Chemical mapping of a 207-nucleotide RNA with 2A3 and DMS.
The RNA was probed in 150 mM KOAc, 10 mM MgCl2 and 150 mM bicine (pH 8.5) at 24 C.
The data come from the RNA Mapping Database (RMDB), library OK3TST.
[RMDB]
RNA sequence: GGGAACGACUCGAGUAGAGUCGAAAAUCUGCCGCCGUAUCGUCGACGCGAUUUUUCCAUGAUGGAUGACGGUGAUCGCAUGGCUUGGGAGCGUGGGUACGCGCAUCCUUCCAAUUAUGACUCUUCUUAUGGCAAUAAUGGUGGUAGUUCGUGGUCGAUAAUGAAGUUUUUUCGAAAACUUCAUUAUAAAAGAAACAACAACAACAAC
Reactivity to 2A3 in 0.01 (KOAc 150mM, MgCl2 10mM, bicine 150mM(pH8.5), 24C), signal-to-noise 8, nucleotides 027 to 156: u010c020u040g010c010c010g020c000c010g050u050a070u090c040g040u030c050g070a080c060g020c020g020a010u060u010u000u070u030c050c020a080u180g050a100u160g130g050a060u080g060a050c090g060g040u060g010a040u040c010g000c090a070u070g030g000c080u070u110g030g000g010a030g010c020g000u030g030g120g100u190a120c050g020c000g000c060a150u020c000c000u030u030c020c000a060a070u120u070a120u270g050a080c040u040c030u260u020c030u100u160a090u170g020g000c000a050a080u100a120a080u110g020g000u000g010g010u010a010g020u020u030c100g020u060g030g060u050c030g010
Reactivity to DMS in 0.01 (KOAc 150mM, MgCl2 10mM, bicine 150mM(pH8.5), 24C), signal-to-noise 4, nucleotides 027 to 156: u010c030u000g030c040c020g040c020c010g040u010a050u000c060g020u000c010g020a090c080g020c040g000a080u000u000u000u000u000c050c010a150u020g010a170u010g010g020a080u000g020a080c040g020g020u000g010a060u000c020g000c070a150u000g030g010c130u010u010g020g010g020a190g020c020g020u000g010g020g020u000a080c080g010c040g000c020a080u000c050c020u000u000c020c040a060a160u000u000a090u000g010a080c050u000c030u000u000c050u000u000a100u000g030g000c050a060a050u010a060a080u010g020g000u000g010g020u000a050g000u000u000c050g030u000g000g010u000c040g010